[RMDB]
RNA sequence: GGGAACGACUCGAGUAGAGUCGAAAAGAUUUCGCCUGGUACAGCGCGGCAUCGGCCAUCUUCACGAGCGUCGCGUCCGAGUGCGCGAUGUGCUCGUGCGACGUGACGAGGCCGAUGCUGACGGUCAACCACUAUGGGCGUUCGCGCCCAUAGUGGUAAAAGAAACAACAACAACAAC
Reactivity to 2A3 in 0.01 (KOAc 150mM, MgCl2 10mM, bicine 150mM(pH8.5), 24C), signal-to-noise 1, nucleotides 027 to 126: g040a000u070u020u100c040g000c010c050u070g070g100u200a130c070a120g010c100g000c020g070g000c010a010u000c000g010g000c000c030a300u020c030u040u050c030a050c080g110a030g000c050g000u020c000g000c000g040u040c050c000g180a090g030u160g020c010g010c070g130a100u170g000u060g080c000u010c000g000u030g000c020g000a100c020g000u060g000a000c040g020a070g000g000c000c000g000a000u020g000c000u000g000a030c000g000g000u070c020a010
Reactivity to DMS in 0.01 (KOAc 150mM, MgCl2 10mM, bicine 150mM(pH8.5), 24C), signal-to-noise 1, nucleotides 027 to 126: g000a140u000u020u030c050g050c030c030u010g000g010u000a100c070a110g030c050g020c040g000g000c010a000u000c020g000g050c000c020a110u000c030u000u000c040a010c040g000a260g010c000g020u000c010g010c000g000u010c060c140g010a150g060u030g000c020g000c130g010a020u000g000u010g030c030u000c000g030u000g000c210g010a030c060g010u010g000a060c120g000a050g030g010c000c010g010a000u000g010c000u000g000a110c020g010g020u000c040a170
Chemical mapping of a 177-nucleotide RNA with 2A3 and DMS. 2A3 adducts were read by reverse transcription with SuperScript II with manganese. For DMS the reverse transcriptase was MarathonRT.